[RMDB]
RNA sequence: GGGAACGACUCGAGUAGAGUCGAAAAGCGGCUCUGGCACCCACGUAUUCGAUCUUGCGAGAGAUAAAGGACAUCUCAAGCUCGGGUUUAUGGGUGUUGGACCAAGCAAAACGGGCGUUCGCGCCCGCAUUUGGUCAAUGUUCGCAUUGACCAAAUGAAAAGAAACAACAACAACAAC
Reactivity to DMS in 0.01 (KOAc 150mM, MgCl2 10mM, bicine 150mM(pH8.5), 24C), signal-to-noise 3, nucleotides 027 to 126: g000c140g020g000c300u010c010u020g010g010c010a010c000c000c000a020c040g010u000a040u000u000c000g000a010u000c030u000u000g030c160g010a080g010a110g000a160u030a070a120a250g020g020a210c150a100u000c000u000c020a030a070g010c090u000c000g000g000g000u000u000u000a050u000g000g000g010u010g000u000u000g030g020a040c030c040a100a150g020c090a100a040a090a170c020g030g000g020c010g040u000u020c190g010c010g000c000c000c000g010
Reactivity to 2A3 in 0.01 (KOAc 150mM, MgCl2 10mM, bicine 150mM(pH8.5), 24C), signal-to-noise 2, nucleotides 027 to 126: g040c030g000g060c170u000c000u010g020g000c000a000c000c010c000a010c040g060u030a070u000u010c000g000a030u030c010u020u040g000c040g020a040g000a010g010a060u210a140a260a100g150g030a040c020a120u020c010u010c010a020a010g000c010u000c010g010g000g010u050u070u030a040u050g000g000g000u000g000u000u010g000g000a010c010c020a030a010g000c020a000a080a070a050c010g000g010g010c020g000u060u070c200g000c000g000c090c000c020g000